[RMDB]
An RNA of 177 nucleotides, treated with DMS and 2A3 and read out base by base.
For DMS the reverse transcriptase was MarathonRT.
RNA sequence: GGGAACGACUCGAGUAGAGUCGAAAAAAAGAUCGCAUUUGACAGUUAUGUCAAAGGGACACACCCUUCGCGCGUCCUGGGGCGUGCCAGUCGAUGACGAGGAAAAUCGUAUCGAUUGAAAUCUGCGUCACGAAUGUACAUUCGUGUACAUUCGUGAAAAAGAAACAACAACAACAAC
Reactivity to DMS in 0.01 (KOAc 150mM, MgCl2 10mM, bicine 150mM(pH8.5), 24C), signal-to-noise 8, nucleotides 027 to 126: a080a050a070g020a110u010c040g020c090a170u000u000u000g000a010c000a070g010u040u030a080u010g020u000c010a010a020a020g000g000g010a090c100a080c140a070c010c000c010u010u010c130g000c040g010c070g020u010c010c040u010g010g020g010g020c030g010u000g000c060c000a010g000u000c000g000a020u010g010a020c000g020a010g020g000a080a070a080a150u000c000g020u000a040u000c000g000a000u000u000g000a050a080a050u010c050u000g000c240g010
Reactivity to 2A3 in 0.01 (KOAc 150mM, MgCl2 10mM, bicine 150mM(pH8.5), 24C), signal-to-noise 9, nucleotides 027 to 126: a000a000a000g110a100u080c050g010c100a200u020u000u020g010a010c020a040g090u280u210a190u200g000u030c000a000a010a010g050g030g020a010c020a000c000a040c070c010c000u090u140c060g000c000g000c010g010u040c010c050u150g060g020g010g000c010g000u000g000c010c000a000g000u000c000g000a010u050g150a050c010g010a030g060g190a140a100a020a150u020c000g000u000a000u010c000g010a010u000u020g010a040a030a020u050c060u090g020c030g060